[RMDB]
RNA sequence: GGGAACGACUCGAGUAGAGUCGAAAAUCCACUAUGAAUCUAGUCACUAAAUAAAUACAAUUAGCUACUGUGUGUAAUAGUGAGUGUUGAUAACACAAAAUAAUAGUAUAGUUUUGGAAGAUUAUACGCGCCCUUGCUCCGUUCGCGGAGCAAGGAACUCACCACUGUAGUUCGCUACAGUGGUGAGAAAAGAAACAACAACAACAAC
Reactivity to 2A3 in 0.01 (KOAc 150mM, MgCl2 10mM, bicine 150mM(pH8.5), 24C), signal-to-noise 1, nucleotides 027 to 156: u000c000c000a000c000u010a060u130g040a170a060u010c120u110a000g050u040c030a000c010u020a050a070a020u190a240a090a100u100a160c150a040a130u020u010a000g000c000u000a000c000u020g000u000g020u000g020u250a020a020u000a020g010u020g090a010g100u010g040u030u110g120a260u210a290a030c050a000c020a010a090a000a070u170a010a100u120a160g000u010a000u000a050g020u030u020u050u090g090g010a070a020g000a060u020u000a010u010a010c060g000c000g100c020c000c000u000u000g010c000u020c000c010g020u080u030c220g000c020g050g000a000g020c000a000a000g000g000a000a000

Background
Chemical mapping of a 207-nucleotide RNA with 2A3. Source: RMDB library M2RFPK, as collected in RNAgym. 2A3 adducts were read by reverse transcription with SuperScript II with manganese. Conditions: 150 mM KOAc, 10 mM MgCl2 and 150 mM bicine (pH 8.5), 24 C.